[RMDB]
RNA sequence: GGGAACGACUCGAGUAGAGUCGAAAAUUCGGCGGGCAACAGCAUUUUACGCUCAAAAACCCACGCCAGCACAAACAGCAAGAUGGCCGACAGCGCGUUGAGCAGCGCCAUAUUCAUUAUCAGCCCGACACCUGAUACACUUCGGUGUAUCAGGUGUAAAAGAAACAACAACAACAAC
Reactivity to 2A3 in 0.01 (KOAc 150mM, MgCl2 10mM, bicine 150mM(pH8.5), 24C), signal-to-noise 3, nucleotides 027 to 126: u080u030c050g010g000c020g000g030g000c030a060a050c020a050g030c000a000u090u100u160u280a080c080g020c010u020c050a010a060a070a000a000c000c070c020a030c070g010c010c000a050g000c060a030c020a120a160a060c020a020g060c030a000a120g050a120u170g050g030c010c030g020a030c010a000g090c010g000c010g050u030u100g010a010g010c010a010g010c020g000c000c000a030u060a080u130u030c050a020u040u120a060u160c050a030g040c010c000c000g000
Reactivity to DMS in 0.01 (KOAc 150mM, MgCl2 10mM, bicine 150mM(pH8.5), 24C), signal-to-noise 2, nucleotides 027 to 126: u020u000c140g000g000c050g020g000g020c060a080a110c100a040g020c120a070u000u030u010u060a180c200g000c000u000c130a020a010a000a110a110c020c030c040a040c100g010c070c020a080g000c010a130c120a080a070a100c130a070g010c080a070a000g020a140u000g000g000c030c010g000a060c290a120g010c100g010c110g010u060u020g000a060g000c040a100g010c060g000c000c040a130u000a050u010u000c050a070u020u000a120u040c070a070g020c000c030c000g010
This 177-nucleotide RNA was probed chemically with 2A3 and DMS. The reactions ran in a buffer of 150 mM KOAc, 10 mM MgCl2 and 150 mM bicine (pH 8.5), at 24 C. For 2A3, 1,410 sequencing reads were counted. For DMS the reverse transcriptase was MarathonRT.